[RMDB]
RNA sequence: GGGAACGACUCGAGUAGAGUCGAAAAGAUAUGGAUCAGUGUAGACAUGCAGGUCGGAAACGACCCUGCAACAGCUACCUGAUCCUAAGUCAAAAGCACCAUUACGACUUCGGUCGUAAUGGUGCAACAAUGGAACCAUGUUCGCAUGGUUCCAUUGAAAAGAAACAACAACAACAAC
Reactivity to DMS in 0.01 (KOAc 150mM, MgCl2 10mM, bicine 150mM(pH8.5), 24C), signal-to-noise 5, nucleotides 027 to 126: g000a040u000a270u010g000g000a020u000c000a020g000u020g020u000a000g010a100c080a180u000g000c000a030g010g000u010c010g000g000a080a050a130c000g010a010c110c080c070u000g000c000a010a050c280a120g010c010u000a000c000c010u000g000a000u000c000c000u000a000a030g000u000c020a100a090a100a120g010c000a010c000c000a010u000u000a010c000g000a010c000u010u010c230g030g010u000c000g000u000a000a000u000g000g020u000g000c000a000a030
Reactivity to 2A3 in 0.01 (KOAc 150mM, MgCl2 10mM, bicine 150mM(pH8.5), 24C), signal-to-noise 4, nucleotides 027 to 126: g020a010u040a010u090g000g000a000u000c000a010g010u010g000u300a010g100a180c060a100u030g000c000a000g000g010u010c010g020g010a030a020a010c010g000a020c100c090c030u000g020c000a020a070c080a040g040c000u000a000c000c010u020g000a000u000c000c000u010a010a000g010u000c010a000a020a110a150g000c000a010c000c000a000u010u010a010c020g010a000c000u080u150c300g100g010u020c000g010u000a000a010u010g020g010u000g000c000a000a010